[RMDB]
RNA sequence: GGGAACGACUCGAGUAGAGUCGAAAAUGUCAUUCAGAAGGCGAAAGAUGCCAAAAACAGUAACGAACGUGAGAGAGCGAAGCUGAGUAGAAGAAACCGAGGUGCGAGAUAUACACAGAUAUGGCCAGAAGUUGAGAUACGCACACAGUCGCCAGAACUAUUAGUCACGCUUCGGCGUGACUAAUAGAAAAGAAACAACAACAACAAC
Reactivity to DMS in 0.01 (KOAc 150mM, MgCl2 10mM, bicine 150mM(pH8.5), 24C), signal-to-noise 1, nucleotides 027 to 156: u010g050u000c020a190u000u010c060a160g000a050a020g010g050c040g000a140a050a150g000a070u000g030c050c140a020a000a060a040a020c030a110g010u010a080a170c130g030a060a060c000g000u000g040a150g010a090g010a130g000c070g020a120a080g010c030u040g030a140g050u000a090g010a120a120g000a080a040a060c100c050g010a060g010g030u010g010c030g000a050g000a150u000a060u020a030c090a060c050a110g010a050u010a080u010g010g030c000c070a180g000a060a030g000u000u010g000a060g000a090u000a060c100g020c050a060c050a040c050a040g030u000c020g010c000c050a120g000a050a140
Reactivity to 2A3 in 0.01 (KOAc 150mM, MgCl2 10mM, bicine 150mM(pH8.5), 24C), signal-to-noise 1, nucleotides 027 to 156: u100g010u000c000a000u050u010c000a050g080a220a000g100g030c010g030a060a110a000g130a050u150g000c050c010a100a010a000a070a030c040a030g000u020a060a010c050g000a050a000c050g040u060g030a080g000a000g000a010g030c010g030a020a000g040c000u000g000a010g030u050a020g000a110a000g040a080a040a010c080c050g030a030g030g030u010g030c030g040a040g000a000u120a020u030a120c060a000c000a030g070a040u030a020u110g070g000c010c010a050g040a200a010g040u040u010g040a050g000a020u050a050c020g040c000a000c000a000c030a080g010u070c030g000c000c000a010g020a080a000